Notes: Chemical mapping of a 207-nucleotide RNA with DMS and 2A3. It was measured as part of the RMDB library OK3TST.
RNA sequence: GGGAACGACUCGAGUAGAGUCGAAAAAUCUACAUUUAUGUUUAUUCUUAUGAUGUCUUCAAUCUUAGGAGGAAAUUAAAUGAUUUUACUUACAUUGUGGAUCGUAUUAGUUUUAAACAUUGCGGCUGGUAUUCAUUGUGCAAUAAGUGCCGUAAACCACUACGCUUCAUUUCGAUGAAGCGUAGUGAAAAGAAACAACAACAACAAC
Reactivity to DMS in 0.01 (KOAc 150mM, MgCl2 10mM, bicine 150mM(pH8.5), 24C), signal-to-noise 1, nucleotides 027 to 156: a090u010c020u000a090c010a070u000u000u000a020u030g010u020u000u000a000u010u010c000u000u000a070u000g010a060u010g040u000c070u030u000c080a020a050u030c060u010u000a090g020g020a070g020g000a040a000a040u000u000a010a030a130u010g000a170u000u000u010u000a090c040u000u000a060c100a080u020u000g020u000g000g000a020u000c050g060u000a030u000u000a090g010u000u000u000u000a020a050a110c060a120u000u020g000c090g030g070c000u010g010g020u000a060u000u000c050a120u000u000g030u000g010c050a060a060u000a060a110g000u000g020c000c000g000u010a060a080a130c180
Reactivity to 2A3 in 0.01 (KOAc 150mM, MgCl2 10mM, bicine 150mM(pH8.5), 24C), signal-to-noise 3, nucleotides 027 to 156: a010u050c060u120a120c040a130u130u150u110a070u080g010u000u010u010a030u070u000c020u040u070a040u090g040a030u090g060u010c020u080u010c040a090a080u000c080u120u200a030g020g050a020g010g040a050a020a020u030u070a070a180a220u250g010a020u030u050u000u080a110c000u000u000a000c000a050u010u030g010u040g020g010a010u090c050g010u070a030u030u090a050g090u050u050u050u030a000a010a000c010a010u010u060g020c040g020g000c040u050g100g000u010a030u030u060c010a020u000u300g050u080g060c030a030a040u040a120a010g040u040g020c030c010g020u040a110a000a000c020
DMS adducts were read by reverse transcription with MarathonRT. The reactions ran in a buffer of 150 mM KOAc, 10 mM MgCl2 and 150 mM bicine (pH 8.5), at 24 C. The DMS profile rests on 3,107 reads.